[RMDB]
RNA sequence: GGGAACGACUCGAGUAGAGUCGAAAAGUGUAUCGAUCAACUUUCGAUUUUCUUCGAAUUGAAAUACAAGAAGUCUGGGGAAGAGGCUGCUUUAAUGUUAGGCGCCUUUAAGAAGUAUACCGCUAAUUUCCAGUCCUACAAAGAACUCUAUUAUUCAAUCAGUAUCACCUUUCGAGGUGAUACUGAUAAAAGAAACAACAACAACAAC
Reactivity to 2A3 in 0.01 (KOAc 150mM, MgCl2 10mM, bicine 150mM(pH8.5), 24C), signal-to-noise 1, nucleotides 027 to 156: g040u040g000u040a040u120c050g020a030u010c030a010a000c040u000u030u030c000g000a020u060u090u060u150c070u020u050c050g020a020a020u000u190g010a120a050a000u040a020c020a010a020g100a140a000g060u100c110u080g020g000g000g000a060a060g020a010g020g030c010u090g000c010u070u060u180a170a100u240g150u060u130a050g010g000c040g000c000c020u010u000u010a000a000g010a040a000g020u060a060u020a250c000c110g080c060u080a030a170u020u030u030c000c020a000g020u050c000c010u080a090c100a050a090a020g140a130a050c040u040c010u050a160u200u030a070u300u090c020a000
This 207-nucleotide RNA was probed chemically with 2A3. Reactivities are rounded to 0.1 and cut off at 0 and 3. It was measured as part of the RMDB library OK3TST. 2A3 adducts were read by reverse transcription with SuperScript II with manganese.